[RMDB]
RNA sequence: GGGAACGACUCGAGUAGAGUCGAAAAACGGUGCGGAAGUUCGCGCUUCCGUGAAACGCGAAAAUCGGACGGUGGCUGCAAGUCGCAUCGCAAAACCGCGGCAAGUGGAGUUAUCGAGAGGAGGCUGAAACCAUCCAACACUUCGGUGUUGGAUGAACCUAACUGACGUGUUCGCACGUCAGUUAGGAAAAGAAACAACAACAACAAC
Reactivity to 2A3 in 0.01 (KOAc 150mM, MgCl2 10mM, bicine 150mM(pH8.5), 24C), signal-to-noise 1, nucleotides 027 to 156: a000c020g000g000u020g010c000g040g000a050a020g100u090u170c100g010c040g010c060u010u000c000c000g010u010g040a090a060a000c070g060c030g050a050a060a000a060u150c030g000g040a010c030g040g000u010g000g010c070u080g010c130a070a030g040u000c000g000c010a040u020c040g050c070a050a050a030a030c050c030g040c000g070g000c050a050a070g010u010g020g010a020g010u040u050a110u080c070g000a080g000a010g070g000a010g020g000c040u020g020a060a030a000c010c000a000u020c000c010a000a000c000a010c000u030u090c180g050g000u000g010u030u010g000g050a000u000g000a020a020